[RMDB]
RNA sequence: GGGAACGACUCGAGUAGAGUCGAAAAACUAGUAGGUACAGGGGUGAGUUGACCUGUCAUCUAGACUGCUGACCAUCAACUCACCGGUCAGCUGGAUGAUGUCCACAGAGUACGACAUCAGUACUCAGUGUAUUGUCUACUUCGGUGGACGAUACACAAAAGAAACAACAACAACAAC
Reactivity to DMS in 0.01 (KOAc 150mM, MgCl2 10mM, bicine 150mM(pH8.5), 24C), signal-to-noise 9, nucleotides 027 to 126: a120c030u000a030g020u020a060g010g020u030a030c030a040g000g000g000g010u010g000a060g030u000u000g000a050c050c070u000g000u000c030a010u010c020u010a040g010a150c110u010g000c030u000g000a020c010c180a190u010c100a050a060c080u010c080a060c130c090g000g010u000c020a050g000c000u010g000g010a070u020g010a070u010g000u000c020c030a090c190a080g010a030g010u000a020c040g000a130c160a100u040c100a080g010u010a020c010u000c020a140
Reactivity to 2A3 in 0.01 (KOAc 150mM, MgCl2 10mM, bicine 150mM(pH8.5), 24C), signal-to-noise 9, nucleotides 027 to 126: a000c030u030a010g070u030a030g010g080u120a020c020a020g050g030g010g030u050g040a070g020u020u030g040a040c010c030u010g010u000c000a010u010c010u020a040g130a190c060u050g010c010u010g010a000c010c000a040u080c030a030a060c040u030c070a040c020c020g000g000u000c000a010g010c010u020g020g020a040u070g010a020u060g060u030c010c010a060c050a080g020a010g020u010a010c040g070a030c070a140u090c030a040g010u010a010c000u010c030a010